[RMDB]
RNA sequence: GGGAACGACUCGAGUAGAGUCGAAAAGAAAGGGACCCCUGCCAGGGGACGCAGCCAGUCGACCCCAGGCAUGUUUUUGCAUGCCCGACUGACCCCUACUGCGGGCAGGAGGGGUGGUCCCGAAAGACCAUACUAGCUAGUUCGCUAGCUAGUAUGGAAAAGAAACAACAACAACAAC
Reactivity to DMS in 0.01 (KOAc 150mM, MgCl2 10mM, bicine 150mM(pH8.5), 24C), signal-to-noise 5, nucleotides 027 to 126: g010a070a100a170g020g000g000a020c010c000c250c020u000g010c030c040a110g010g020g010g020a120c080g020c020a080g010c140c120a080g010u000c010g010a150c040c010c010c020a200g000g010c000a000u000g000u000u000u010u000u030g000c020a020u000g000c000c000c030g010a090c030u010g010a110c010c030c010c030u000a110c080u010g020c070g010g020g010c020a010g000g000a080g000g000g000g020u000g010g010u000c000c000c010g010a050a090a100g000a190
Reactivity to 2A3 in 0.01 (KOAc 150mM, MgCl2 10mM, bicine 150mM(pH8.5), 24C), signal-to-noise 3, nucleotides 027 to 126: g020a060a080a030g010g000g000a010c000c000c000c010u010g020c010c020a070g050g020g000g020a000c010g000c020a010g120c100c020a020g010u050c010g050a110c000c020c000c010a000g000g000c010a000u010g070u030u190u070u150u300g020c010a010u010g000c020c070c000g000a000c010u030g050a070c010c010c000c000u070a100c030u070g060c080g070g040g000c020a000g010g020a020g000g020g010g020u030g010g000u000c000c000c000g000a020a010a000g020a020